[RMDB]
RNA sequence: GGGAACGACUCGAGUAGAGUCGAAAAGAUAUGGAUGCCCGUGGCGUCAACAGCUCGGAAACGAGACAUGACGCACGGCAUCCUAAGUCAAAACGCGCUCAUUACAGUUCGCUGUAAUGAGCGCGAAGUUCUCUAACUACUUCGGUAGUUAGAGAACAAAAGAAACAACAACAACAAC
Reactivity to DMS in 0.01 (KOAc 150mM, MgCl2 10mM, bicine 150mM(pH8.5), 24C), signal-to-noise 2, nucleotides 027 to 126: g010a060u000a300u010g000g000a020u000g010c120c010c040g030u000g010g040c020g000u000c000a020a060c290a140g000c000u000c000g000g010a090a090a150c010g010a030g000a070c120a230u000g020a010c000g000c000a010c010g000g000c000a000u000c000c000u000a000a040g000u000c010a080a030a110a170c030g010c000g000c000u010c000a000u010u000a000c000a010g020u000u010c230g000c030u000g000u010a010a010u000g010a000g000c000g010c000g010a000a040
Reactivity to 2A3 in 0.01 (KOAc 150mM, MgCl2 10mM, bicine 150mM(pH8.5), 24C), signal-to-noise 2, nucleotides 027 to 126: g020a010u070a040u110g000g000a010u000g030c100c070c050g030u060g260g190c020g010u010c010a040a070c080a250g020c010u000c010g040g030a060a060a040c010g000a010g010a030c060a130u120g010a010c010g000c000a010c000g000g010c000a000u000c000c000u000a030a010g010u030c020a030a010a060a140c010g010c000g010c000u000c010a000u020u010a020c020a020g090u050u090c180g150c280u000g000u030a020a000u030g030a000g000c000g010c000g010a000a000
Structure probing data (DMS and 2A3) for a 177-nucleotide construct. DMS adducts were read by reverse transcription with MarathonRT. The data come from the RNA Mapping Database (RMDB), library TTRDEL.